[RMDB]
RNA sequence: GGGAACGACUCGAGUAGAGUCGAAAAUACUUAUCUGGAAUCACUUUGCCUCUAAAGGCCAGAGAAAAAUCACAGCUUCCUUGUCGGAGGGGAAAAGGACAGGUGAUCUGGGGAAAACGCAGCUACAGUCUGUCCCAGUAUUCGUACUGGGACAGACAAAAGAAACAACAACAACAAC
Reactivity to 2A3 in 0.01 (KOAc 150mM, MgCl2 10mM, bicine 150mM(pH8.5), 24C), signal-to-noise 2, nucleotides 027 to 126: u130a030c090u150u090a010u070c040u030g000g030a070a020u060c030a010c080u060u040u080g050c040c030u050c080u120a050a070a060g010g020c000c000a000g020a000g070a030a080a000a020a000u090c060a040c010a110g040c070u030u010c000c000u030u030g050u040c050g060g070a070g060g030g010g020a030a000a010a000g050g060a020c000a000g000g010u010g020a070u070c080u060g030g000g000g020a000a080a000a000c080g030c040a040g010c030u070a110c050a060